RNA sequence: GGGAACGACUCGAGUAGAGUCGAAAAUCCCUCGUGAAUAUUGCAGGCAUCGACUGCAAAGACUAAACACUCCUCAAGACCGAUAGCGAACAAGUAGCGUGAGCGAACGCUGAAAAGCACCCCACGAGUGCUGAACUCUGUUCGCAGAGUUCAGCACAAAAGAAACAACAACAACAAC
Reactivity to 2A3 in 0.01 (KOAc 150mM, MgCl2 10mM, bicine 150mM(pH8.5), 24C), signal-to-noise 3, nucleotides 027 to 126: u050c000c000c010u020c050g040u010g060a060a050u140a060u120u030g000c010a000g010g040c020a230u090c110g110a100c030u000g000c010a000a020a010g030a020c060u150a040a080a000c020a100c070u040c000c020u020c050a000a080g010a050c000c010g090a080u060a040g050c020g030a050a060c030a090a050g030u090a020g060c000g050u060g050a030g050c050g040a000a020c030g010c000u010g020a030a020a020a030g020c000a020c010c000c000c000a050c030g020a070
Reactivity to DMS in 0.01 (KOAc 150mM, MgCl2 10mM, bicine 150mM(pH8.5), 24C), signal-to-noise 1, nucleotides 027 to 126: u000c000c000c000u000c120g000u030g000a070a040u040a120u010u060g000c050a030g010g000c160a010u000c060g000a160c000u000g010c010a010a030a050g000a290c160u000a160a040a150c150a230c030u010c060c000u000c060a110a090g000a150c080c020g000a090u030a060g000c020g010a040a040c040a010a000g000u000a040g000c000g000u000g020a130g000c130g000a170a120c060g000c000u000g050a040a010a150a240g000c000a010c000c000c010c020a110c050g000a090